[RMDB]
RNA sequence: GGGAACGACUCGAGUAGAGUCGAAAACCGUAGGAUCUUUUGACGCAAUGGAAAAGAGACCAACAGCGAGCUUUCGAAAGAGAGCUCGACAUGGUCUGACAUUGCGAUAAGAUCCUAAACGGAAACAGUAGUCGUAAGUUCGCUUACGACUACUGAAGAGUUUAAUCCUGUUCGCAGGAUUAAACUCAAAAGAAACAACAACAACAAC
Reactivity to DMS in 0.01 (KOAc 150mM, MgCl2 10mM, bicine 150mM(pH8.5), 24C), signal-to-noise 2, nucleotides 027 to 156: c010c000g000u000a030g000g000a000u000c020u000u000u000u040g020a270c030g020c000a010a000u000g010g000a040a150a120a210g000a100g000a030c000c000a020a120c150a140g010c000g010a030g000c000u000u000u010c010g000a180a160a280g020a040g000a010g030c010u000c000g000a000c070a300u000g010g050u000c010u000g010a110c020a010u000u000g000c000g010a090u010a000a010g010a040u000c000c010u000a010a020a080c030g000g000a150a100a170c010a000g000u000a010g020u000c020g000u000a020a020g020u000u010c300g010c020u000u000a000c010g000a000c000u000a020c000u010g000a070a130
Reactivity to 2A3 in 0.01 (KOAc 150mM, MgCl2 10mM, bicine 150mM(pH8.5), 24C), signal-to-noise 3, nucleotides 027 to 156: c010c010g000u010a010g010g000a000u010c010u060u150u070u200g100a090c020g000c010a010a000u030g020g070a150a090a140a110g300a050g000a000c030c010a050a100c050a100g080c010g000a000g000c000u030u000u000c010g030a050a100a020g010a010g000a000g000c000u000c000g020a010c000a080u080g000g020u010c000u000g000a000c000a000u000u000g000c000g000a000u020a020a000g000a000u010c000c000u000a010a010a000c010g040g020a060a110a030c010a000g010u010a000g000u000c000g000u000a000a000g000u020u130c230g030c200u010u000a000c000g010a000c000u000a000c000u000g000a010a010